Structure probing data (2A3 and DMS) for a 177-nucleotide construct.
RNA sequence: GGGAACGACUCGAGUAGAGUCGAAAAGAUAUGGACAUGACUAGACAUGCUUUCGGGUCGGAAACGACCUUCGAGCAACAGCUAGUAUGUCCUAAGUCAAAACCUUCAACUGUUCGCAGUUGAAGGACAAAGAUGAACGGUUCGCCGUUCAUCUUUGAAAAGAAACAACAACAACAAC
Reactivity to 2A3 in 0.01 (KOAc 150mM, MgCl2 10mM, bicine 150mM(pH8.5), 24C), signal-to-noise 2, nucleotides 027 to 126: g010a000u010a000u060g000g010a000c000a000u090g140a210c000u010a000g000a030c070a300u300g000c010u000u030u030c020g020g000g010u000c000g000g000a030a010a000c010g000a010c050c000u030u010c020g030a000g000c030a100a020c070a020g010c000u000a000g000u020a000u000g010u000c000c000u000a000a000g000u000c010a020a040a120a280c010c000u000u000c000a000a000c000u020g030u130u170c300g040c200a000g000u000u010g000a000a000g010g000a050
Reactivity to DMS in 0.01 (KOAc 150mM, MgCl2 10mM, bicine 150mM(pH8.5), 24C), signal-to-noise 3, nucleotides 027 to 126: g010a010u000a060u020g000g000a020c000a000u000g010a020c000u000a010g010a040c090a300u010g020c000u000u000u000c260g000g000g020u000c010g040g000a020a020a060c010g000a000c000c000u000u010c110g000a000g010c010a080a040c170a140g000c010u000a010g000u000a010u000g000u000c000c010u000a010a050g000u010c010a210a090a130a210c000c010u000u000c010a000a020c000u000g010u010u000c250g010c010a000g010u000u000g000a020a010g010g020a090
Overview:
The reactions ran in a buffer of 150 mM KOAc, 10 mM MgCl2 and 150 mM bicine (pH 8.5), at 24 C. The 2A3 profile rests on 6,436 reads.